[RMDB]
Record summary: Chemical mapping of a 177-nucleotide RNA with DMS and 2A3. The RNA was probed in 150 mM KOAc, 10 mM MgCl2 and 150 mM bicine (pH 8.5) at 24 C. For DMS, 3,297 sequencing reads were counted.
RNA sequence: GGGAACGACUCGAGUAGAGUCGAAAAGUCGUCGAUUUUGGUGAAAGAGUUAGCCCCGUAUUAGACUCAGCUGGAAGAUCGAUCAUCCUCCAAAAGAAACGAAUUUCAAUGGCUGAACGCCAACAAAACACUCAUCCAAAUUCGUUUGGAUGAGUGUAAAAGAAACAACAACAACAAC
Reactivity to DMS in 0.01 (KOAc 150mM, MgCl2 10mM, bicine 150mM(pH8.5), 24C), signal-to-noise 4, nucleotides 027 to 126: g020u000c040g020u000c030g000a190u000u000u000u010g000g000u000g010a110a130a120g000a050g010u000u000a120g020c080c010c020c060g030u010a080u010u000a160g010a070c020u000c010a130g020c060u000g020g000a040a090g000a050u000c050g010a080u000c080a110u000c000c010u010c040c040a030a010a050a060g000a060a070a020c050g010a060a060u020u000u000c110a070a150u000g010g010c000u000g000a070a220c170g000c030c010a030a100c190a050a040a100
Reactivity to 2A3 in 0.01 (KOAc 150mM, MgCl2 10mM, bicine 150mM(pH8.5), 24C), signal-to-noise 3, nucleotides 027 to 126: g070u050c030g020u010c030g040a050u020u020u060u100g040g000u090g050a130a100a050g040a030g010u040u060a030g040c050c010c000c020g020u050a130u020u160a080g040a050c010u000c020a030g000c030u040g010g040a030a010g000a100u070c050g020a020u030c030a020u000c050c000u010c010c000a000a080a000a030g050a010a040a020c030g020a020a020u080u030u020c060a070a080u030g020g000c020u080g090a100a010c060g000c010c020a020a030c030a030a100a000